[RMDB]
RNA sequence: GGGAACGACUCGAGUAGAGUCGAAAAGUGCUUACAGAAAGUUGGUUGAAUUGAAUGCAAUUAAUGUUUGGAGGCACUUAGUCUUCUAGUGUUUGAAUGUGGAUGGAAUUAAAGCUGGGUUUGUAGUCUGUAGACGUUAGUUCGCUAACGUCUACAGAAAAGAAACAACAACAACAAC
Reactivity to 2A3 in 0.01 (KOAc 150mM, MgCl2 10mM, bicine 150mM(pH8.5), 24C), signal-to-noise 2, nucleotides 027 to 126: g000u000g000c010u080u060a010c000a040g170a050a030a040g020u010u010g030g010u000u020g100a050a120u130u110g110a100a010u210g070c030a000a000u070u090a020a020u050g090u080u260u070g080g020a020g000g000c000a000c020u000u010a020g020u000c010u150u000c010u000a140g080u100g050u110u140u220g060a180a070u130g000u040g080g040a070u050g000g050a130a050u080u090a120a020a000g000c020u030g060g000g050u030u050u120g040u030a110g030u000
Reactivity to DMS in 0.01 (KOAc 150mM, MgCl2 10mM, bicine 150mM(pH8.5), 24C), signal-to-noise 2, nucleotides 027 to 126: g040u000g010c010u000u000a090c010a020g000a030a050a080g010u010u000g000g000u020u000g020a060a080u020u040g000a150a160u020g000c010a030a010u000u010a040a020u010g020u000u020u020g020g030a080g000g000c020a010c040u010u020a070g000u000c030u010u020c080u010a050g000u020g000u020u000u000g000a000a010u000g000u000g010g020a040u010g000g000a050a050u010u020a070a110a130g070c040u010g000g010g000u000u000u000g010u020a070g010u000